[RMDB]
RNA sequence: GGGAACGACUCGAGUAGAGUCGAAAAAGAUCGAUUACGAUCGAUCAAUGAUGCCCCUCACCCGCCUCUGAAGAUCCCAGGUGGGCGAGGGAACGGAGCACGGGAUCACGAGCAGUACGCUGCUCGAAAAAGAACUAGACCUUCGGGUCUAGUUCAACGAUUAUUGGGAGUUCGCUCCCAAUAAUCGAAAAGAAACAACAACAACAAC
Reactivity to 2A3 in 0.01 (KOAc 150mM, MgCl2 10mM, bicine 150mM(pH8.5), 24C), signal-to-noise 2, nucleotides 027 to 156: a010g010a000u000c010g000a000u030u030a080c190g060a010u000c000g010a000u010c010a000a070u150g100a060u190g060c020c010c000c000u010c000a020c000c010c000g000c020c000u090c070u140g070a110a040g010a040u020c000c000c010a000g010g000u030g000g020g000c010g000a030g020g000g010a050a030c080g060g060a110g050c120a050c130g000g010g000a010u000c000a010c020g000a000g000c010a000g030u050a000c240g030c090u020g000c000u010c000g010a000a000a000a020a010g000a010a010c000u000a000g000a000c010c020u030u100c210g060g000g000u000c000u000a000g000u000u000c000a000a000
Source information:
Structure probing data (2A3) for a 207-nucleotide construct. Source: RMDB library M2RFPK, as collected in RNAgym. 2A3 adducts were read by reverse transcription with SuperScript II with manganese. Conditions: 150 mM KOAc, 10 mM MgCl2 and 150 mM bicine (pH 8.5), 24 C.